RNA sequence: GGGAACGACUCGAGUAGAGUCGAAAAUGGAUCCGUGGGACUACCCUCUCCACCCUCCCAACACACUCCUUCCCCCCUGCGGGGCUCCCCCAUAAGAUGGCAGGAACCCACUCAUUGGGGUCCGCUGCAUUCAUUAUUAGUUCGCUAAUAAUGAAUGAAAAGAAACAACAACAACAAC
Reactivity to 2A3 in 0.01 (KOAc 150mM, MgCl2 10mM, bicine 150mM(pH8.5), 24C), signal-to-noise 2, nucleotides 027 to 126: u030g030g010a040u080c100c060g020u030g040g000g020a060c100u140a170c090c000c000u030c010u020c010c010a040c010c000c020u000c020c000c010a090a010c050a000c000a010c050u090c010c050u060u120c020c010c000c000c010c040u040g000c140g010g000g020g020c010u040c000c000c000c000c000a010u020a030a020g070a070u130g060g000c110a080g040g010a030a030c000c010c000a030c040u180c040a090u070u170g010g000g010g020u000c010c000g000c000u010g000
Reactivity to DMS in 0.01 (KOAc 150mM, MgCl2 10mM, bicine 150mM(pH8.5), 24C), signal-to-noise 6, nucleotides 027 to 126: u000g010g000a050u010c070c090g030u000g010g010g000a130c140u010a130c030c010c030u000c060u000c010c030a110c030c030c030u000c010c010c020a060a100c140a090c110a090c070u010c020c050u010u000c010c000c000c020c010c090u010g010c130g020g000g000g010c040u000c030c010c010c010c010a110u010a050a080g000a120u010g000g010c030a090g020g000a030a060c030c000c000a040c270u000c120a170u010u000g000g020g010g000u000c000c010g010c030u000g000